[RMDB]
RNA sequence: GGGAACGACUCGAGUAGAGUCGAAAAAUUGCUUGUGAAAAUCCAUUCAUGGUUAACCAAUUGGCUUAUAGCUCUAGUGCAAAUGGCAGCCUGGUUGGCACAACUUUGCAGGGCAAGCCUAUUGGUAUUACGCAUGGGUUCGCCCAUGCGAAAAGAAACAACAACAACAAC
Reactivity to DMS in 0.01 (KOAc 150mM, MgCl2 10mM, bicine 150mM(pH8.5), 24C), signal-to-noise 3, nucleotides 027 to 129: a020u080u050g040c060u020u100g000u000g000a060a040a070a090u020c040c050a110u060u020c140a060u050g060g040u100u050a090a000c070c000a000a000u000u000g010g050c030u030u050a140u060a080g030c040u000c050u010a200g120u080g060c040a040a000a010u010g000g000c210a100g040c110c000u060g060g030u090u020g010g080c070a050c110a080a160c150u000u090u000g060c010a110g030g020g020c000a040a000g050c000c000u010a030u060u000g000g000u030a040u070u000a000
Reactivity to 2A3 in 0.01 (KOAc 150mM, MgCl2 10mM, bicine 150mM(pH8.5), 24C), signal-to-noise 4, nucleotides 027 to 129: a000u080u100g020c030u030u090g040u000g060a080a000a000a040u000c020c020a060u060u070c060a050u060g080g010u050u060a010a000c000c000a020a030u010u050g000g000c010u020u030a140u070a220g010c000u000c010u040a070g220u000g070c020a020a010a020u030g120g000c080a050g060c010c020u110g280g030u140u200g060g000c000a000c000a070a060c040u000u000u010g000c010a000g010g000g000c000a000a000g020c030c000u010a030u000u000g000g010u000a050u050u080a020

An RNA of 170 nucleotides, treated with DMS and 2A3 and read out base by base. It was measured as part of the RMDB library 15KLIB. The RNA was probed in 150 mM KOAc, 10 mM MgCl2 and 150 mM bicine (pH 8.5) at 24 C. Reactivities are given for positions 27 through 129. For DMS the reverse transcriptase was MarathonRT.